[RMDB]
RNA sequence: GGGAACGACUCGAGUAGAGUCGAAAAGAGUGAGUGGUACUGAGUGAGGGAUGGUAAGUCCUUAAUCCGCUGCUGGCUAACCUGUCUCCGUGACAGGCCUCACUCUAACGUGCAGAGAUCGGAUGGGAGUGAGGACCGCUCACUAGCAUCCGUGUGAUAGACACUAUACAUUCGUGUAUAGUGUCUAAAAAGAAACAACAACAACAAC
Reactivity to DMS in 0.01 (KOAc 150mM, MgCl2 10mM, bicine 150mM(pH8.5), 24C), signal-to-noise 3, nucleotides 027 to 156: g000a090g020u000g000a040g010u010g040g020u000a080c110u010g000a070g020u000g010a110g040g020g000a060u000g030g020u000a120a170g010u000c020c010u000u000a060a100u010c050c020g010c060u010g030c040u010g020g000c070u010a080a090c000c010u000g010u000c000u010c190c230g020u010g010a040c020a010g010g010c010c020u000c020a020c010u000c020u020a030a060c080g020u000g000c050a150g010a180g010a130u000c020g030g000a050u000g010g000g010a040g010u000g000a050g020g010a080c110c090g030c020u000c000a030c010u000a040g010c020a020u000c000c010g020u000g020u010g000a270
Reactivity to 2A3 in 0.01 (KOAc 150mM, MgCl2 10mM, bicine 150mM(pH8.5), 24C), signal-to-noise 3, nucleotides 027 to 156: g060a010g000u020g000a020g000u090g030g020u110a160c070u080g000a010g060u010g030a080g000g040g010a010u060g000g090u140a140a120g060u060c000c020u060u080a060a050u070c020c040g020c030u050g020c010u000g040g000c030u080a050a000c000c000u000g000u010c010u030c090c220g080u150g000a000c000a020g000g000c000c000u000c000a000c000u000c010u000a040a030c070g080u090g070c040a040g030a020g000a190u070c010g040g010a020u020g200g000g050a000g000u010g000a010g000g090a160c060c010g090c040u010c000a020c000u000a020g040c010a010u020c000c010g040u060g010u010g110a050